[RMDB]
Source: RMDB library OK1LIB, as collected in RNAgym. Chemical mapping of a 177-nucleotide RNA with DMS and 2A3. For 2A3 the reverse transcriptase was SuperScript II with manganese. The 2A3 profile rests on 1,486 reads. The reactions ran in a buffer of 150 mM KOAc, 10 mM MgCl2 and 150 mM bicine (pH 8.5), at 24 C.
RNA sequence: GGGAACGACUCGAGUAGAGUCGAAAAUGGUUUGCCAACUUAGGUACUGAAGAUUCUAGUGGUACUAAAGUCUUUGCUCUUGGUGGAAAGGUAGAAAAUGUAGGACUUGUUGAAGUUCCAAUGGGUACAUCGGAUAGGAGUUCGCUCCUAUCCGAUGAAAAGAAACAACAACAACAAC
Reactivity to DMS in 0.01 (KOAc 150mM, MgCl2 10mM, bicine 150mM(pH8.5), 24C), signal-to-noise 3, nucleotides 027 to 126: u040g010g030u010u010u000g000c040c030a080a080c130u030u010a170g000g000u000a060c040u000g000a070a080g000a100u020u030c070u000a070g010u040g000g000u010a080c020u020a020a080a040g000u020c030u000u020u020g000c050u000c020u000u020g000g000u010g000g010a040a120a060g000g000u000a040g020a020a020a050a070u030g010u020a100g000g000a050c090u000u020g000u010u000g020a010a150g000u000u000c020c060a080a040u030g000g000g020u020a220
Reactivity to 2A3 in 0.01 (KOAc 150mM, MgCl2 10mM, bicine 150mM(pH8.5), 24C), signal-to-noise 3, nucleotides 027 to 126: u070g130g000u030u050u060g050c030c000a060a020c150u090u090a050g000g080u060a030c040u070g100a140a070g060a200u150u110c050u140a110g050u050g140g030u040a050c010u040a050a070a020g000u000c030u050u070u030g020c010u020c000u070u050g010g000u030g060g000a080a040a000g000g030u080a020g050a010a200a040a020u090g080u070a080g040g020a010c010u040u050g050u070u070g090a090a040g030u040u000c010c000a060a100u110g000g000g020u030a040